[RMDB]
RNA sequence: GGGAACGACUCGAGUAGAGUCGAAAACGUCGGCGGCGGUGGAGUACACACCGGGAUCGCUCUUGCUUUCCCAUGCCGGGUCCGGCUCGGUGUAGCCGGGGAAGGUAAACACGAAGUCCUCGUUGCGUAAACACGUGCCUUUCGAGGCACGUGUUUAAAAAGAAACAACAACAACAAC
Reactivity to DMS in 0.01 (KOAc 150mM, MgCl2 10mM, bicine 150mM(pH8.5), 24C), signal-to-noise 1, nucleotides 027 to 126: c110g070u000c180g000g000c000g020g020c060g000g040u060g000g000a220g070u020a050c200a160c100a020c000c020g010g040g000a050u040c070g000c050u000c070u000u040g000c000u000u000u000c040c000c000a250u010g000c000c000g040g070g000u020c000c000g020g000c010u000c000g000g000u050g040u070a010g000c020c000g030g000g020g000a300a160g000g010u030a020a220a020c180a120c080g000a200a030g000u000c060c040u000c090g000u000u000g000c080g000
Reactivity to 2A3 in 0.01 (KOAc 150mM, MgCl2 10mM, bicine 150mM(pH8.5), 24C), signal-to-noise 1, nucleotides 027 to 126: c040g020u040c000g080g000c010g010g050c030g000g050u180g040g070a160g060u220a060c160a000c000a000c020c000g000g020g000a060u000c000g000c020u010c060u080u120g010c000u000u060u040c010c000c020a010u040g000c090c020g000g000g050u000c010c010g000g000c000u000c040g240g000u300g090u300a010g000c010c000g000g020g010g040a020a000g000g000u000a030a030a000c030a010c020g010a170a030g030u060c050c000u020c030g070u000u000g010c040g050